Background
Chemical mapping of a 207-nucleotide RNA with 2A3 and DMS. The DMS profile rests on 9,552 reads. Conditions: 150 mM KOAc, 10 mM MgCl2 and 150 mM bicine (pH 8.5), 24 C. For 2A3 the reverse transcriptase was SuperScript II with manganese. In probing experiments dimethyl sulfate is read out at A N1 and C N3, which are open when not base-paired. For 2A3, 7,735 sequencing reads were counted. DMS adducts were read by reverse transcription with MarathonRT. The data come from the RNA Mapping Database (RMDB), library OK3TST.
RNA sequence: GGGAACGACUCGAGUAGAGUCGAAAACAUAGUGAGACCUUGUCUCUACAAAACAUUCUUUUAAAAAUUUGCAAGGCAUGGUGGCGCAUGCCUAUAGUCUCAACUACUCAGGAGGCUGAGGCUGGAAGAUCACUUGAGCCAGUGAGGUCGUGGCUAAAGUGGUAAUAUGAUUCGUCAUAUUACCACUAAAAGAAACAACAACAACAAC
Reactivity to 2A3 in 0.01 (KOAc 150mM, MgCl2 10mM, bicine 150mM(pH8.5), 24C), signal-to-noise 8, nucleotides 027 to 156: c030a030u150a040g070u070g050a030g010a030c040c130u070u170g040u020c010u020c030u120a030c060a020a080a030a020c030a070u130u130c090u100u260u170u210a090a110a090a130a170u130u170u170g050c060a050a030g010g000c000a010u020g000g010u010g010g020c030g010c030a010u040g000c000c000u020a040u010a010g000u000c010u010c050a040a100c030u140a040c030u040c110a060g010g080a030g080g000c020u010g020a010g020g000c010u020g040g020a060a020g020a070u070c020a020c090u040u080g020a020g020c000c020a030g010u040g050a030g000g030u060c050g030u050g020g000c020u070a200a100
Reactivity to DMS in 0.01 (KOAc 150mM, MgCl2 10mM, bicine 150mM(pH8.5), 24C), signal-to-noise 3, nucleotides 027 to 156: c040a080u000a160g020u010g000a040g010a020c010c100u010u000g010u000c010u000c020u000a060c000a000a090a070a060c040a060u000u000c050u000u010u010u010a030a080a100a130a160u010u000u000g020c070a090a080g020g000c020a020u000g000g020u000g020g020c060g000c040a070u000g000c010c010u000a020u000a020g040u000c010u010c010a040a030c040u000a080c040u010c090a230g030g000a110g030g010c010u000g020a030g030g020c010u000g030g000a090a080g010a080u000c030a060c050u000u000g020a060g030c000c040a090g030u000g000a090g000g040u000c040g000u000g000g020c000u000a040a110